[RMDB]
RNA sequence: GGGAACGACUCGAGUAGAGUCGAAAAGACCGAGCCGGCCAGGCCUCGAUCGACGAUCUGGCGUCUCUCGAAGAAGACUUUCCGUUGCACGUCGCCGUCUACCGGCGGGUGAUUGCGGAGUUCAACGCUUUUACUCCCGUUUCGACGGGAGUAAAAGAAAAGAAACAACAACAACAAC
Reactivity to DMS in 0.01 (KOAc 150mM, MgCl2 10mM, bicine 150mM(pH8.5), 24C), signal-to-noise 3, nucleotides 027 to 126: g020a130c040c040g010a070g000c080c050g000g020c060c060a070g000g000c050c030u010c020g000a120u000c150g010a090c130g010a100u000c050u000g010g020c030g000u000c030u000c030u000c060g010a110a100g000a090a120g000a080c080u010u000u000c010c000g000u000u000g020c030a010c020g000u010c010g020c000c000g000u000c230u010a110c270c030g000g000c010g000g000g020u000g000a080u000u000g010c000g010g010a060g000u000u000c050a040a130c180g010
Reactivity to 2A3 in 0.01 (KOAc 150mM, MgCl2 10mM, bicine 150mM(pH8.5), 24C), signal-to-noise 3, nucleotides 027 to 126: g050a000c020c040g000a010g030c040c030g160g080c030c010a010g020g000c020c010u020c020g140a210u150c060g110a100c040g040a090u020c020u040g010g040c010g030u000c010u010c030u040c030g090a140a080g060a070a020g050a090c020u060u130u020c040c000g010u010u030g010c020a010c030g240u140c000g060c020c000g000u090c080u190a180c150c020g020g010c000g000g000g000u030g060a230u040u110g000c010g010g000a030g020u070u050c060a070a060c070g000

An RNA of 177 nucleotides, treated with DMS and 2A3 and read out base by base. Source: RMDB library OK2TRN, as collected in RNAgym. In probing experiments dimethyl sulfate is read out at A N1 and C N3, which are open when not base-paired. The reactions ran in a buffer of 150 mM KOAc, 10 mM MgCl2 and 150 mM bicine (pH 8.5), at 24 C. DMS adducts were read by reverse transcription with MarathonRT.